[RMDB]
RNA sequence: GGGAACGACUCGAGUAGAGUCGAAAACUUGCACUAUAAUCUCAGACAUCAAAAGUUUAAUUGGCGAAAAUAACUACGCUCUCGCUGCGUAAUCGAAGAAUAGUAGAUUAGACGCUUCAUCGCCGCCAAAGUGGCAGCGACGAGACAUCGCCCGAGCGAAGUAGCUGCUGUUCGCAGCAGCUACUUCAAAAGAAACAACAACAACAAC
Reactivity to 2A3 in 0.01 (KOAc 150mM, MgCl2 10mM, bicine 150mM(pH8.5), 24C), signal-to-noise 1, nucleotides 027 to 156: c060u090u190g000c020a000c040u050a030u050a300a120u050c050u050c100a000g090a140c020a140u150c090a110a090a080a080g030u070u130u250a210a190u150u180g020g000c020g080a000a000a060a220u120a130a000c090u110a020c070g020c030u000c000u000c020g010c030u070g000c000g010u000a000a000u010c000g010a000a000g090a030a050u090a050g000u010a020g010a000u000u000a160g000a090c030g010c000u070u010c040a050u050c020g000c000c010g030c020c020a210a230a140g180u160g030g000c000a010g000c000g010a000c000g000a000g000a020c000a030u020c000g020c010c010c070g020a030g150c130